[RMDB]
RNA sequence: GGGAACGACUCGAGUAGAGUCGAAAAGACGUAAUCCGCGCAAAUCCACAAAGGCCAACGAUGAGCGUUUCGCUGUAGCCGCUUAAGGCAACAGCCGGGGCCGCCUGAGCCCUGUUACCAAAGACGGGAAACUCGAUGCCAUUCGUGGCAUCGAGAAUGCUCAAGCAUGAUUCGUCAUGCUUGAGCAAAAAGAAACAACAACAACAAC
Reactivity to 2A3 in 0.01 (KOAc 150mM, MgCl2 10mM, bicine 150mM(pH8.5), 24C), signal-to-noise 2, nucleotides 027 to 156: g040a010c010g010u030a050a000u080c000c040g030c000g000c050a020a060a110u080c040c010a110c040a120a070a040g060g020c020c010a050a040c070g060a030u040g010a030g070c000g010u080u110u080c050g000c040u000g000u030a060g010c000c040g060c130u260u200a100a090g040g000c010a020a010c000a030g000c010c000g000g000g000g000c000c040g000c010c000u000g000a010g000c020c000c030u010g060u100u070a000c010c000a050a000a000g060a040c070g000g000g000a020a030a040c000u010c000g000a000u000g000c000c000a000u050u050c120g060u090g000g000c000a000u000c000g000a000g000a000a000
Structure probing data (2A3) for a 207-nucleotide construct.
Conditions: 150 mM KOAc, 10 mM MgCl2 and 150 mM bicine (pH 8.5), 24 C.
It was measured as part of the RMDB library M2RFPK.